[RMDB]
RNA sequence: GGGAACGACUCGAGUAGAGUCGAAAAACUUCCUACUUCGGUAGGAAGUAAAAGAAGAAAAGUUGGUGCUUAGACCACGCCCUCUACCGUAAUAAUAGAUAAACCCUUAGCACUUCGGUGCUAAGAACACAGUUUAAUUCUUCGGAAUUAAACUGUGAAAAGAAACAACAACAACAAC
Reactivity to 2A3 in 0.01 (KOAc 150mM, MgCl2 10mM, bicine 150mM(pH8.5), 24C), signal-to-noise 3, nucleotides 027 to 126: a000c000u000u000c000c010u000a010c010u030u050c200g090g010u000a010g000g020a000a000g000u000a000a000a000a020g090a030a010g030a020a060a010a010g040u090u070g040g010u040g050c120u180u170a030g040a050c000c020a010c020g000c000c020c000u030c020u060a090c050c040g030u030a080a090u120a220a030u030a150g120a040u160a110a120a070c040c010c000u000u000a000g000c000a000c000u020u030c270g060g000u000g000c010u000a010a000g010a010a010
Reactivity to DMS in 0.01 (KOAc 150mM, MgCl2 10mM, bicine 150mM(pH8.5), 24C), signal-to-noise 3, nucleotides 027 to 126: a020c000u010u000c000c000u000a010c000u010u010c150g020g040u000a000g000g000a010a000g010u000a010a040a100a090g000a100a090g010a040a050a040a020g030u010u010g020g010u000g010c190u010u010a110g000a040c020c040a030c040g000c010c010c010u000c050u000a070c030c060g000u000a100a060u010a100a060u010a050g010a040u000a050a050a140c190c100c010u000u000a000g000c000a000c000u000u010c200g020g010u000g010c000u000a000a000g000a080a150
Structure probing data (2A3 and DMS) for a 177-nucleotide construct. The data come from the RNA Mapping Database (RMDB), library M2PK50. For 2A3 the reverse transcriptase was SuperScript II with manganese.